Chemical mapping of a 177-nucleotide RNA with DMS. Conditions: 150 mM KOAc, 10 mM MgCl2 and 150 mM bicine (pH 8.5), 24 C. The data come from the RNA Mapping Database (RMDB), library TTRINS. For DMS the reverse transcriptase was MarathonRT.

[RMDB]
RNA sequence: GGGAACGACUCGAGUAGAGUCGAAAAGAUAUGGAACGUCUGCGCACAGCUAUGAAGUAAAUUGUGGAUUGACUCGGAAACGAGUCAAUCCACAAUUUAUGGAGCUGGCGCAGAGCGUUCCUAAGUCGAAUUAGUGGAAGUUCGCUUCCACUAAUUCAAAAGAAACAACAACAACAAC
Reactivity to DMS in 0.01 (KOAc 150mM, MgCl2 10mM, bicine 150mM(pH8.5), 24C), signal-to-noise 1, nucleotides 027 to 126: g000a130u010a300u010g020g000a030a000c000g010u000c000u010g010c010g000c010a150c010a010g010c010u000a300u020g020a100a300g000u000a010a000a000u000u000g060u000g000g030a040u000u010g000a010c000u000c000g000g000a100a080a170c000g010a030g010u000c010a020a010u010c010c010a000c000a000a000u000u010u000a010u000g020g020a000g010c010u010g000g010c010g010c010a010g000a010g010c010g010u000u000c000c000u000a000a090g000u010c090